[RMDB]
The record gives the reactivity of an RNA of 177 nucleotides to DMS and 2A3. For 2A3 the reverse transcriptase was SuperScript II with manganese. For 2A3, 1,342 sequencing reads were counted.
RNA sequence: GGGAACGACUCGAGUAGAGUCGAAAACGUUCGCCUGCCAAGUGAUGCACACUGCGUCGUCGUAGGUAAAGAUCGGCGAAUCAGGCAGGCGCUGUGGCGCCGACGCUUACGGUUUUUUUGGACGGCGGGUCCGUCCCCUAUUCGUAGGGGACGGACCAAAAGAAACAACAACAACAAC
Reactivity to DMS in 0.01 (KOAc 150mM, MgCl2 10mM, bicine 150mM(pH8.5), 24C), signal-to-noise 1, nucleotides 027 to 126: c020g020u070u000c040g000c000c000u000g020c010c010a110a010g020u040g000a120u010g110c050a130c300a040c210u050g010c000g030u000c030g010u000c020g000u040a010g080g000u010a090a160a100g020a090u040c010g050g000c030g070a010a060u060c060a210g040g020c070a110g000g030c180g000c070u030g000u000g000g010c070g160c070c000g020a060c010g010c020u000u000a040c070g000g000u000u000u000u000u000u000u000g000g000a050c050g000g000c020g000
Reactivity to 2A3 in 0.01 (KOAc 150mM, MgCl2 10mM, bicine 150mM(pH8.5), 24C), signal-to-noise 3, nucleotides 027 to 126: c020g060u120u050c030g020c010c020u050g020c020c000a030a100g120u080g080a010u060g000c050a070c020a080c290u180g020c060g000u010c000g010u020c020g000u030a040g030g030u120a170a060a000g080a180u040c010g000g000c000g050a020a050u170c010a050g000g070c040a020g090g020c070g000c070u030g030u110g080g040c020g010c000c000g000a030c030g000c020u000u010a020c010g090g000u070u000u020u040u050u150u190g040g000a000c000g000g050c010g010
Reactivities are given for positions 27 through 126.